Chemical mapping of a 177-nucleotide RNA with DMS and 2A3. For 2A3 the reverse transcriptase was SuperScript II with manganese. High 2A3 reactivity points to a flexible backbone, as in loops and unpaired stretches. Conditions: 150 mM KOAc, 10 mM MgCl2 and 150 mM bicine (pH 8.5), 24 C.
RNA sequence: GGGAACGACUCGAGUAGAGUCGAAAAUAAUAUGCAUAUCGAGUUCCCAUGUAUUUUCGUAGCCCUGCGGCUGUAACAUUACAGCUUAGUAAGAAUGCUUCCUAACGAUAGCUAGCCGCAGGAUUAAGAAUCCAGUAUUCUUCGGAAUACUGGAUUCAAAAGAAACAACAACAACAAC
Reactivity to DMS in 0.01 (KOAc 150mM, MgCl2 10mM, bicine 150mM(pH8.5), 24C), signal-to-noise 2, nucleotides 027 to 126: u010a060a120u020a080u000g000c090a090u000a110u010c060g000a110g020u000u000c010c000c000a170u000g010u010a030u000u000u000u000c050g010u010a080g000c080c000c010u000g010c020g010g010c000u010g010u020a050a070c130a090u000u000a040c120a040g020c080u000u010a070g010u010a050a060g000a170a060u010g010c070u000u000c060c030u020a040a050c060g000a090u010a110g000c030u000a010g020c000c000g010c000a000g010g000a020u000u020a060a130
Reactivity to 2A3 in 0.01 (KOAc 150mM, MgCl2 10mM, bicine 150mM(pH8.5), 24C), signal-to-noise 1, nucleotides 027 to 126: u080a000a040u160a100u160g060c040a030u080a060u300c090g130a060g080u000u040c000c010c010a000u050g030u050a080u000u070u000u020c030g000u040a040g010c050c000c000u030g000c010g000g000c000u010g060u040a060a060c030a100u040u060a090c080a010g000c030u000u060a030g000u010a010a000g040a120a020u160g100c000u050u060c010c040u070a080a050c030g060a050u100a020g050c040u030a000g040c010c000g000c010a000g030g000a000u010u010a000a000